[RMDB]
RNA sequence: GGGAACGACUCGAGUAGAGUCGAAAAGCCUCAGUUUCCUCACCUGUUUAAGGGGGAUGACAAAGCACUUACUUCACAGGGAUAAAGAAAGGAUGAAAUGAGGUAAUGCAUGUCAAACACUUAGCUGAUACCGUGAGACAUUCGUGUCUCACGGUAUAAAAGAAACAACAACAACAAC
Reactivity to DMS in 0.01 (KOAc 150mM, MgCl2 10mM, bicine 150mM(pH8.5), 24C), signal-to-noise 2, nucleotides 027 to 126: g000c020c000u000c110a070g000u000u010u000c010c010u000c120a230c100c020u010g000u000u000u000a060a020g000g020g000g000g000a190u010g000a050c010a070a230a140g000c020a020c300u000u000a020c050u000u040c100a030c070a130g000g000g060a190u010a090a110a050g010a090a120a160g010g000a100u010g010a160a060a110u000g010a040g020g020u000a010a030u000g020c040a180u000g000u000c010a090a060a130c150a060c060u010u000a070g020c020u000g000
Reactivity to 2A3 in 0.01 (KOAc 150mM, MgCl2 10mM, bicine 150mM(pH8.5), 24C), signal-to-noise 2, nucleotides 027 to 126: g000c000c000u020c010a010g010u020u050u030c010c020u030c090a160c010c040u110g100u270u130u210a040a060g070g000g000g030g020a000u030g000a010c030a030a150a010g000c010a020c060u010u090a010c020u000u000c000a000c030a040g110g070g060a150u220a160a150a100g160a130a130a030g170g080a050u090g100a040a010a130u080g000a000g060g000u010a020a000u000g010c040a010u000g040u090c000a010a050a060c040a050c040u090u160a050g040c020u070g030